Source: RMDB library OK3TST, as collected in RNAgym. Chemical mapping of a 207-nucleotide RNA with 2A3 and DMS. The RNA was probed in 150 mM KOAc, 10 mM MgCl2 and 150 mM bicine (pH 8.5) at 24 C. 2A3 adducts were read by reverse transcription with SuperScript II with manganese. DMS adducts were read by reverse transcription with MarathonRT. The 2A3 profile rests on 1,434 reads.
[RMDB]
RNA sequence: GGGAACGACUCGAGUAGAGUCGAAAAGUAAGGCUCAAACCCUGCGUUUCAGGACGGAGAAGGUGUCACCUAGUAUCUUGAGCAAAAAUCGCGUCCCUGAUUCUCGCAUUGAAUUGAUCAAGACCGCUCCUCAGGUUGUUUUUCAGCACUCAUUUCAAUGUGAGAUCUUAUUCGUAAGAUCUCACAUAAAAGAAACAACAACAACAAC
Reactivity to 2A3 in 0.01 (KOAc 150mM, MgCl2 10mM, bicine 150mM(pH8.5), 24C), signal-to-noise 3, nucleotides 027 to 156: g130u080a050a040g030g020c020u010c110a070a090a180c010c030c020u030g030c040g010u000u050u070c070a050g030g000a020c020g040g010a070g060a120a020g080g010u080g100u120c080a070c020c010u050a060g050u070a100u080c030u030u070g050a030g010c050a000a030a030a070a010u100c100g000c000g070u010c030c050c000u020g040a060u070u060c070u040c040g030c050a060u040u110g040a130a080u060u090g020a030u110c000a040a040g010a050c010c040g030c070u040c010c000u070c040a020g060g020u030u010g030u020u120u030u040u060c030a040g060c050a060c080u120c020a070u070u200u160c050a040
Reactivity to DMS in 0.01 (KOAc 150mM, MgCl2 10mM, bicine 150mM(pH8.5), 24C), signal-to-noise 2, nucleotides 027 to 156: g010u010a070a090g010g030c020u010c190a110a140a080c000c010c010u000g010c070g020u000u000u010c000a110g020g020a080c030g010g020a140g010a110a070g010g010u000g020u000c050a100c030c000u010a110g010u000a060u000c020u000u000g000a150g000c040a010a050a040a060a070u010c100g020c000g020u000c000c020c030u000g000a140u000u000c050u000c020g010c030a100u020u010g020a130a110u010u000g010a090u000c020a080a070g010a050c040c030g040c020u000c020c020u000c060a090g060g000u000u010g010u010u000u000u000u010c050a100g030c050a110c090u010c060a120u010u000u000c020a080